Chemical mapping of a 177-nucleotide RNA with DMS. The DMS profile rests on 594 reads. Values cover nucleotides 27 to 126. Conditions: 150 mM KOAc, 10 mM MgCl2 and 150 mM bicine (pH 8.5), 24 C.
[RMDB]
RNA sequence: GGGAACGACUCGAGUAGAGUCGAAAAUUGGAUGAGAUGAAGGAGUCCAAUGCGGAUAGAAUUGUCGAUGAAGCUGAACUUCAUGUCAAACUUCGGAUGGACAAUUCCACGGAGCUUUACAUCAGUAUGAGUUUUACGUGUUCGCACGUAAAACUCAAAAAGAAACAACAACAACAAC
Reactivity to DMS in 0.01 (KOAc 150mM, MgCl2 10mM, bicine 150mM(pH8.5), 24C), signal-to-noise 1, nucleotides 027 to 126: u000u010g000g000a050u000g010a170g020a100u020g000a050a030g020g000a300g000u000c020c000a020a020u020g000c020g020g000a140u000a070g000a020a020u020u000g040u010c000g000a240u060g020a020a000g000c060u000g000a060a040c020u000u010c280a160u000g000u000c070a110a130a150c000u000u020c010g000g040a250u030g020g000a020c020a050a000u000u000c000c130a040c100g000g020a040g020c100u020u000u000a110c090a030u000c110a060g010u000a100